[RMDB]
RNA sequence: GGGAACGACUCGAGUAGAGUCGAAAAGGCCUGAUACUGUCCUGUUCCAUGGUUUUCAGGAGGCGACUAGAUCUAAAGUCGCGCGGCAGGCGGCGAGGGGGCGCUGUGGCCCGCGCCUGCCGGCUGAGGCCCAGCUGCGGAAACCUGGUGCUGCCAAGAUUAUAUUACUCUUCGGAGUAAUAUAAUCAAAAGAAACAACAACAACAAC
Reactivity to 2A3 in 0.01 (KOAc 150mM, MgCl2 10mM, bicine 150mM(pH8.5), 24C), signal-to-noise 1, nucleotides 027 to 156: g010g000c010c020u060g000a060u070a280c030u120g050u070c010c010u060g050u110u070c050c000a090u100g010g030u060u040u030u060c140a160g020g070a040g100g000c010g000a000c010u040a060g060a300u140c050u260a080a110a100g010u000c010g010c010g000c000g000g040c000a010g000g000c060g020g110c020g050a130g060g060g010g000g000c040g000c150u130g110u110g110g010c020c000c010g000c000g040c000c000u000g020c010c000g010g010c010u000g010a060g010g000c000c030c010a010g000c000u070g040c000g060g000a000a040a050c000c000u030g020g040u070g040c010u010g000c040c020a050a100

Background
Structure probing data (2A3) for a 207-nucleotide construct. The RNA was probed in 150 mM KOAc, 10 mM MgCl2 and 150 mM bicine (pH 8.5) at 24 C. Values are in units of 0.01, from 0 to 300, in steps of 10. The 2A3 profile rests on 471 reads. For 2A3 the reverse transcriptase was SuperScript II with manganese. It was measured as part of the RMDB library OK3TST.